Source: RMDB library OK1LIB, as collected in RNAgym. An RNA of 177 nucleotides, treated with DMS and 2A3 and read out base by base. Conditions: 150 mM KOAc, 10 mM MgCl2 and 150 mM bicine (pH 8.5), 24 C. DMS adducts were read by reverse transcription with MarathonRT.

[RMDB]
RNA sequence: GGGAACGACUCGAGUAGAGUCGAAAAGAUCAGAUGCAGUGUCGUCUGGCAGGUGUCUGGUUGAAGCCGUGGGCUGUGUGGUGAAGUACAUGCACGAUGUGUACGCGUCACCAGAUGAUCACGCAUGGGGUGUAUCAUCGUUCGCGAUGGUAUACCCAAAAGAAACAACAACAACAAC
Reactivity to DMS in 0.01 (KOAc 150mM, MgCl2 10mM, bicine 150mM(pH8.5), 24C), signal-to-noise 9, nucleotides 027 to 126: g000a020u010c010a010g000a020u000g000c010a060g010u010g030u000c010g020u040c200u050g010g000c000a030g000g010u000g010u000c000u000g000g010u000u010g010a100a050g020c110c010g050u000g000g000g010c030u010g020u040g020u000g000g000u000g000a030a150g000u000a010c010a010u000g010c100a170c280g000a120u020g010u000g000u000a000c000g000c070g000u010c000a010c010c000a010g000a070u020g000a090u020c010a010c020g000c040a170u040g010
Reactivity to 2A3 in 0.01 (KOAc 150mM, MgCl2 10mM, bicine 150mM(pH8.5), 24C), signal-to-noise 9, nucleotides 027 to 126: g020a020u020c000a000g000a010u010g000c010a080g300u010g010u040c090g100u130c190u300g020g000c000a010g010g010u010g000u000c000u010g010g020u010u030g030a020a000g040c040c000g000u010g000g020g000c010u000g040u020g000u000g070g000u010g010a120a020g000u000a000c000a000u010g030c060a030c200g090a200u110g000u000g000u000a000c000g000c020g030u000c000a000c000c000a000g000a050u090g010a040u050c000a000c010g000c020a050u090g040